This 177-nucleotide RNA was probed chemically with DMS and 2A3. For DMS the reverse transcriptase was MarathonRT. The 2A3 profile rests on 10,360 reads.
RNA sequence: GGGAACGACUCGAGUAGAGUCGAAAAGAUAUGGAGCCGCUUUCGAUAAGGCUCCAUCGGAAACGAUGGAAGCCUUUUGACGAAAGCAGGCUCCUAAGUCAAAGCAGGGAUCUUCGGAUCCCUGCAAGUAAGUUUCUAUGUUCGCAUAGAAACUUACAAAAGAAACAACAACAACAAC
Reactivity to DMS in 0.01 (KOAc 150mM, MgCl2 10mM, bicine 150mM(pH8.5), 24C), signal-to-noise 4, nucleotides 027 to 126: g000a010u000a080u020g010g000a010g040c000c000g000c010u010u000u000c010g020a160u010a010a000g000g010c000u000c000c000a010u000c010g020g000a020a020a040c000g010a020u000g000g000a050a080g010c000c000u000u000u010u000g010a280c050g010a010a010a000g010c000a030g070g010c000u000c000c000u000a010a070g000u000c020a140a170a180g000c000a010g000g000g010a010u000c000u000u010c230g040g000a010u000c000c000c000u000g000c000a010a020
Reactivity to 2A3 in 0.01 (KOAc 150mM, MgCl2 10mM, bicine 150mM(pH8.5), 24C), signal-to-noise 3, nucleotides 027 to 126: g000a010u020a010u080g010g000a000g010c020c010g040c120u010u010u010c050g170a230u090a300a000g000g000c000u000c000c000a000u010c000g000g000a030a010a000c010g010a000u000g020g020a070a070g010c000c040u030u070u100u250g300a140c010g000a000a000a000g010c020a000g020g030c000u000c000c000u000a000a000g000u010c020a050a100a000g000c000a000g010g010g000a000u000c000u050u210c300g130g000a000u000c010c000c000u010g010c010a000a000